[RMDB]
RNA sequence: GGGAACGACUCGAGUAGAGUCGAAAAGACGCCUUUAGAAGAAGAGGCUAGGGGGUAUUCCGGUGUGGGAUACUUAGUAAUAUGCAACGCUAAUUGCAUCAGAUUGUAGGACGGAAUUUACAGUCUUUAGAGAUAAGCACGUUCGCGUGCUUAUCAACGACUGAAAACUCUUCGGAGUUUUCAGUCGAAAAGAAACAACAACAACAAC
Reactivity to 2A3 in 0.01 (KOAc 150mM, MgCl2 10mM, bicine 150mM(pH8.5), 24C), signal-to-noise 1, nucleotides 027 to 156: g060a030c060g030c030c000u050u020u070a260g050a230a020g020a010a050g030a030g030g000c070u090a060g010g000g000g040g000u010a040u010u010c070c050g100g110u200g070u210g090g030g000a010u000a040c000u030u040a000g080u130a000a220u070a070u180g010c000a000a030c020g010c140u250a110a110u110u020g020c010a000u000c000a000g040a120u080u020g050u050a030g000g030a010c000g040g140a000a030u260u210u110a090c000a020g000u000c000u040u050u040a170g000a000g000a050u000a000a000g000c000a000c000g020u010u090c250g000c010g070u000g000c000u000u000a000u000c000a010a000